Notes
The record gives the reactivity of an RNA of 177 nucleotides to 2A3 and DMS. Reactivities are rounded to 0.1 and cut off at 0 and 3. The RNA was probed in 150 mM KOAc, 10 mM MgCl2 and 150 mM bicine (pH 8.5) at 24 C.
RNA sequence: GGGAACGACUCGAGUAGAGUCGAAAAAGGAGAACUAAUGACAGUUGCCAGAUGGAUGAGGGAGUUUAUCGCAAACCAUCCUGACUACAAGCAAGACAGUGUCAUAACUGAUGAAAUGAAUUAUAGCAGCUGUUGUUAGAUUCGUCUAACAACAGCUAAAAGAAACAACAACAACAAC
Reactivity to 2A3 in 0.01 (KOAc 150mM, MgCl2 10mM, bicine 150mM(pH8.5), 24C), signal-to-noise 3, nucleotides 027 to 126: a000g120g030a110g000a050a050c060u080a140a020u030g040a020c000a040g030u010u010g020c020c000a010g020a090u040g020g020a010u020g020a300g010g050g010a040g020u000u150u130a240u140c050g010c060a020a010a000c010c000a000u000c000c000u020g040a000c010u060a020c020a080a010g050c000a000a010g070a080c050a070g060u010g020u110c030a010u040a090a040c060u080g060a070u110g030a110a050a050u090g080a050a060u300u090a110u110a100g080c070
Reactivity to DMS in 0.01 (KOAc 150mM, MgCl2 10mM, bicine 150mM(pH8.5), 24C), signal-to-noise 4, nucleotides 027 to 126: a090g020g010a140g000a070a070c110u000a090a050u000g000a030c030a040g000u000u000g020c010c080a120g000a080u000g000g020a010u000g000a180g020g000g000a300g030u000u000u000a060u030c280g010c040a020a200a190c040c010a030u020c020c000u000g000a210c210u010a050c170a090a110g010c090a020a090g010a040c080a050g000u000g020u020c170a080u020a090a060c070u020g020a110u000g000a050a070a060u000g000a060a070u000u000a100u010a100g000c130